[RMDB]
Chemical mapping of a 177-nucleotide RNA with DMS and 2A3. For DMS, 1,655 sequencing reads were counted. The RNA was probed in 150 mM KOAc, 10 mM MgCl2 and 150 mM bicine (pH 8.5) at 24 C. Source: RMDB library TTRDEL, as collected in RNAgym.
RNA sequence: GGGAACGACUCGAGUAGAGUCGAAAAGAUAUGGAAUGGGCACUCCUAUUAUCAGCGAUGAAAUCGGAAACGAUGGAGCUGUGUAGGUUGCCAGCAUUCCUAAGUCAAACCGUCCUUCGGGACGGAACUCUGCAAUACUCUUCGGAGUAUUGCAGAGAAAAGAAACAACAACAACAAC
Reactivity to DMS in 0.01 (KOAc 150mM, MgCl2 10mM, bicine 150mM(pH8.5), 24C), signal-to-noise 2, nucleotides 027 to 126: g000a020u000a300u010g000g000a020a010u000g030g000g000c000a030c180u020c010c000u000a010u000u020a090u000c010a000g000c000g000a080u020g000a070a090a020u000c000g050g020a130a130a220c020g010a020u010g010g000a090g020c000u000g050u010g010u000a010g000g000u000u000g000c010c010a160g000c000a040u010u000c010c010u010a030a090g000u000c040a070a140a180c000c000g000u000c000c010u000u000c230g030g010g010a020c010g000g000a020a050
Reactivity to 2A3 in 0.01 (KOAc 150mM, MgCl2 10mM, bicine 150mM(pH8.5), 24C), signal-to-noise 2, nucleotides 027 to 126: g020a010u040a040u160g000g000a020a000u010g000g010g000c010a010c080u130c010c000u010a020u080u150a180u210c000a000g050c030g210a300u050g000a050a000a030u000c010g000g050a080a040a000c010g000a000u040g000g000a020g000c010u000g000u010g010u020a000g000g000u020u030g000c000c000a000g110c000a000u030u000c020c000u010a160a010g070u030c040a050a040a100c010c010g000u000c010c000u040u060c300g090g010g010a000c030g010g010a010a010